This 207-nucleotide RNA was probed chemically with 2A3. The data come from the RNA Mapping Database (RMDB), library M2RFPK.

RNA sequence: GGGAACGACUCGAGUAGAGUCGAAAAACGGUCGCACGCGACCGAGGCGCGGCUAGGUCGACGGACCGAACAAUGGCAUCCCGCAUUCUGCCAUCCGCCGCGCAGCUUCUUCUCAAACGGUGCGGAAAAAAGUAGGACACCUUCGGGUGUCCUACAACCUAACCGCACAGUUCGCUGUGCGGUUAGGAAAAGAAACAACAACAACAAC
Reactivity to 2A3 in 0.01 (KOAc 150mM, MgCl2 10mM, bicine 150mM(pH8.5), 24C), signal-to-noise 1, nucleotides 027 to 156: a000c020g000g020u020c010g010c070a110c110g110c040g040a010c000c000g000a050g000g000c000g010c020g000g000c000u020a020g000g000u010c010g090a190c180g150g020a000c000c000g000a000a010c010a020a010u000g000g000c010a020u110c040c040c000g000c000a020u300u100c010u030g000c000c000a010u000c010c020g000c000c000g000c000g030c000a000g010c010u090u070c010u070u050c020u030c040a070a080a040c010g010g000u010g000c010g000g000a000a010a080a000a000a000g000u010a000g010g000a000c010a000c000c000u020u080c200g040g000g000u000g000u000c000c000u010a000c000a000a000
Conditions: 150 mM KOAc, 10 mM MgCl2 and 150 mM bicine (pH 8.5), 24 C.